The record gives the reactivity of an RNA of 177 nucleotides to DMS. The DMS profile rests on 1,021 reads. Conditions: 150 mM KOAc, 10 mM MgCl2 and 150 mM bicine (pH 8.5), 24 C. The data come from the RNA Mapping Database (RMDB), library TTRDEL.
[RMDB]
RNA sequence: GGGAACGACUCGAGUAGAGUCGAAAAGAUAUGGACGUCUAGGGGCCUGAUGACCUCGGAAACGAGCAAGGGCUUCUAGAGCGUCCUAAGUCAAAGAUAUCCAUAAGGUUCGCCUUAUGGAUAUCAAUCGAUAAAUCCUCUUCGGAGGAUUUAUCGAAAAAGAAACAACAACAACAAC
Reactivity to DMS in 0.01 (KOAc 150mM, MgCl2 10mM, bicine 150mM(pH8.5), 24C), signal-to-noise 2, nucleotides 027 to 126: g000a040u020a300u000g010g010a020c000g020u010c000u030a000g000g000g000g000c020c000u050g030a080u010g010a120c300c010u010c020g010g000a140a130a170c020g000a000g000c000a090a140g010g000g010c000u010u010c000u000a000g000a050g030c010g000u000c000c020u000a010a050g010u000c030a090a090a180g000a030u000a000u000c000c000a010u020a000a020g000g010u000u050c300g030c010c000u010u000a010u000g010g000a000u000a000u000c010a050a060